[RMDB]
RNA sequence: GGGAACGACUCGAGUAGAGUCGAAAAAACAUCACGUGUACCAGUAGAAUGAUCCACUGCACCUGUAAUCAUAAAUAGGGCACCUUUAAAUGUUGCAUGGUUGAUUAAAUGGAAUAUUGCAGCCGUACAACGAAAACCAAUUCGUUGGUUUUCGUUGAAAAGAAACAACAACAACAAC
Reactivity to 2A3 in 0.01 (KOAc 150mM, MgCl2 10mM, bicine 150mM(pH8.5), 24C), signal-to-noise 6, nucleotides 027 to 126: a010a010c110a030u140c060a020c050g050u070g010u060a080c000c040a040g040u090a020g110a120a120u110g000a030u050c020c020a040c030u040g010c030a060c020c020u060g050u160a090a050u070c030a050u110a100a230a090u130a090g030g020g000c010a080c000c020u090u210u160a070a140a090u160g010u070u040g020c060a060u090g080g070u020u040g050a100u050u160a050a100a040u090g060g060a070a090u190a050u140u090g010c050a020g000c010c020g030u050a040
Reactivity to DMS in 0.01 (KOAc 150mM, MgCl2 10mM, bicine 150mM(pH8.5), 24C), signal-to-noise 4, nucleotides 027 to 126: a020a030c090a070u020c050a060c080g010u010g000u000a070c020c010a090g000u020a070g010a070a070u030g000a070u020c050c010a090c040u000g000c040a040c050c010u020g000u010a050a040u030c070a050u000a070a060a070u030a060g020g000g000c050a050c060c020u000u010u030a040a100a060u020g020u010u010g020c060a020u010g000g020u000u000g000a070u020u010a030a020a090u010g010g000a050a090u040a070u020u040g020c080a050g000c010c040g020u030a180